An RNA of 177 nucleotides, treated with 2A3 and DMS and read out base by base. For 2A3 the reverse transcriptase was SuperScript II with manganese. For 2A3, 30,460 sequencing reads were counted. The data come from the RNA Mapping Database (RMDB), library OK2TST. For DMS, 24,281 sequencing reads were counted. The RNA was probed in 150 mM KOAc, 10 mM MgCl2 and 150 mM bicine (pH 8.5) at 24 C.
RNA sequence: GGGAACGACUCGAGUAGAGUCGAAAAAGAUUGAAGCGUCCUGCCACACGACUCCCAUCCGCCAUCCUCAACUGCACGGUGGUCGUGUCGGCCCGUUCGUUGAGCUGAAGGCCUUGGGCUUCAACGACUACUAAAUGGUGUUCGCACCAUUUAGUAGAAAAGAAACAACAACAACAAC
Reactivity to 2A3 in 0.01 (KOAc 150mM, MgCl2 10mM, bicine 150mM(pH8.5), 24C), signal-to-noise 9, nucleotides 027 to 126: a010g170a120u120u140g050a070a000g040c000g060u030c010c020u020g030c020c000a030c000a000c020g040a020c020u030c030c010c000a030u060c040c030g030c040c010a080u100c020c030u110c040a110a110c060u090g020c080a020c080g020g030u060g020g020u000c010g000u020g070u060c050g010g000c000c010c010g050u040u030c010g010u030u030g020a010g000c030u070g060a090a030g070g020c020c040u070u070g080g020g000c000u050u030c010a010a010c010g030a020
Reactivity to DMS in 0.01 (KOAc 150mM, MgCl2 10mM, bicine 150mM(pH8.5), 24C), signal-to-noise 9, nucleotides 027 to 126: a090g010a140u010u010g010a080a070g010c060g010u000c020c030u000g010c020c030a140c040a050c040g000a050c030u000c160c030c020a160u010c100c100g010c060c050a070u000c060c030u010c100a070a100c150u000g010c090a080c100g010g020u000g010g010u000c010g020u000g010u000c110g030g010c000c060c060g010u000u000c070g010u000u000g010a040g000c050u000g010a110a100g010g000c040c060u000u000g000g000g010c020u000u000c010a010a020c040g000a160